[RMDB]
RNA sequence: GGGAACGACUCGAGUAGAGUCGAAAAUGGGGUAACAGUGGGAAAUAUGCUAGUUCCCCUCCAGGCCGCUGAUUCCAUGUGACAGCCGUUAAGUCCUUGGAAUGCCAGCCACGCUGUCCAAGGCAUUACAGAGUAUCACCUUGAGACAGAACAAAACAUAUAGAGGAGGGUUCGCCCUCCUCUAUAUAAAAGAAACAACAACAACAAC
Reactivity to 2A3 in 0.01 (KOAc 150mM, MgCl2 10mM, bicine 150mM(pH8.5), 24C), signal-to-noise 1, nucleotides 027 to 156: u040g020g010g010g020u060a070a000c040a030g040u080g000g110g170a060a270a060u240a070u220g050c030u040a080g080u000u000c000c010c100c030u010c000c050a070g010g060c060c040g080c030u030g060a020u000u000c000c030a020u010g050u230g020a020c020a030g130c020c050g000u020u070a040a030g000u070c000c000u010u000g000g000a010a010u060g000c070c030a000g050c060c000a060c070g000c000u000g020u000c000c000a000a000g000g000c050a040u140u220a010c080a080g260a000g060u050a060u140c090a010c060c000u040u040g040a060g000a150c020a000g040a090a000c010a020a020a010a000c070
Reactivity to DMS in 0.01 (KOAc 150mM, MgCl2 10mM, bicine 150mM(pH8.5), 24C), signal-to-noise 1, nucleotides 027 to 156: u000g000g000g050g010u020a010a020c050a080g000u010g000g000g000a090a040a100u000a090u000g040c010u000a080g000u000u000c030c000c000c020u000c000c060a140g000g040c020c020g050c050u000g000a150u000u000c010c020a050u000g000u000g030a070c070a170g010c050c230g020u010u000a120a220g000u000c000c010u020u000g010g030a040a050u020g030c060c020a130g050c000c010a070c030g000c020u040g040u000c020c000a030a100g000g000c030a140u000u010a300c060a200g020a190g000u000a150u000c140a040c000c020u020u000g020a230g000a040c020a010g000a020a110c060a070a080a060a130c110